[RMDB]
RNA sequence: GGGAACGACUCGAGUAGAGUCGAAAAAACCCUGCCGCCUGCCGGAACACUCUUCGCUCCGGACCAGCUCAGCCUCUGAUAAGCUGGACUCGGCACGCCCGCAACAAGCACCGAGGAGUUAAGAGAGGACAGAUUCAGCAUUCGUGCUGAAUCUGUCAAAAGAAACAACAACAACAAC
Reactivity to 2A3 in 0.01 (KOAc 150mM, MgCl2 10mM, bicine 150mM(pH8.5), 24C), signal-to-noise 2, nucleotides 027 to 126: a000a000c030c000c000u010g020c030c020g050c000c030u070g020c010c010g040g000a040a020c020a020c100u060c050u060u100c050g010c040u000c000c000g050g000a050c010c020a000g000c000u000c010a010g030c040c010u110c020u010g050a100u050a150a050g000c010u000g000g010a010c000u000c020g010g060c020a030c040g040c000c000c040g030c000a030a040c020a120a040g000c010a020c030c040g010a030g020g020a010g020u020u070a090a020g040a000g010a010g050
Reactivity to DMS in 0.01 (KOAc 150mM, MgCl2 10mM, bicine 150mM(pH8.5), 24C), signal-to-noise 1, nucleotides 027 to 126: a050a060c010c000c000u030g000c050c030g000c110c000u000g020c070c000g030g000a030a010c130a080c150u010c030u000u010c030g000c080u050c000c060g000g000a030c140c040a030g000c030u000c040a180g000c030c000u000c070u030g050a090u030a060a120g020c000u000g020g000a120c060u000c070g070g020c120a030c100g000c000c000c090g030c080a030a100c130a060a110g000c020a050c030c000g010a090g010g020a070g050u000u000a020a070g060a050g030a020g010
An RNA of 177 nucleotides, treated with 2A3 and DMS and read out base by base. The reactions ran in a buffer of 150 mM KOAc, 10 mM MgCl2 and 150 mM bicine (pH 8.5), at 24 C. DMS adducts were read by reverse transcription with MarathonRT.